[RMDB]
The record gives the reactivity of an RNA of 177 nucleotides to 2A3 and DMS.
RNA sequence: GGGAACGACUCGAGUAGAGUCGAAAAAUUUAACGGCCAGGACGGUCACCUUUGGGGUGGUGACAAGUGUGAUCACUUGGGUGGUGGCUGUGUUUGCGCUUCUCCCAGGAAUCUCGUUUACCAGAUCCCAGCAUUAGCAUUUCGAUGCUAAUGCUGGAAAAGAAACAACAACAACAAC
Reactivity to 2A3 in 0.01 (KOAc 150mM, MgCl2 10mM, bicine 150mM(pH8.5), 24C), signal-to-noise 4, nucleotides 027 to 126: a000u110u150u100a100a040c030g040g000c010c000a010g040g010a010c020g000g010u010c020a010c000c000u070u140u150g100g000g010g000u050g000g030u040g010a020c030a030a120g200u230g020u050g200a070u110c000a000c000u030u020g180g030g020u060g010g020u010g000g000c020u010g000u020g020u040u040u060g050c090g000c010u050u000c010u010c000c000c000a000g000g050a060a060u020c030u000c040g030u030u020u100a170c010c020a050g000a050u080c000
Reactivity to DMS in 0.01 (KOAc 150mM, MgCl2 10mM, bicine 150mM(pH8.5), 24C), signal-to-noise 1, nucleotides 027 to 126: a150u010u030u060a040a070c290g000g010c000c000a010g000g050a070c080g000g040u030c010a000c080c000u010u000u050g000g030g000g010u040g010g000u000g010a030c050a150a050g050u010g000u090g000a050u000c000a000c020u000u000g000g000g030u000g040g000u000g060g000c000u000g010u000g000u010u030u030g010c230g000c010u000u000c100u000c010c000c000a070g000g000a190a030u040c050u000c070g100u000u040u010a120c120c080a110g020a120u000c100

For 2A3 the reverse transcriptase was SuperScript II with manganese.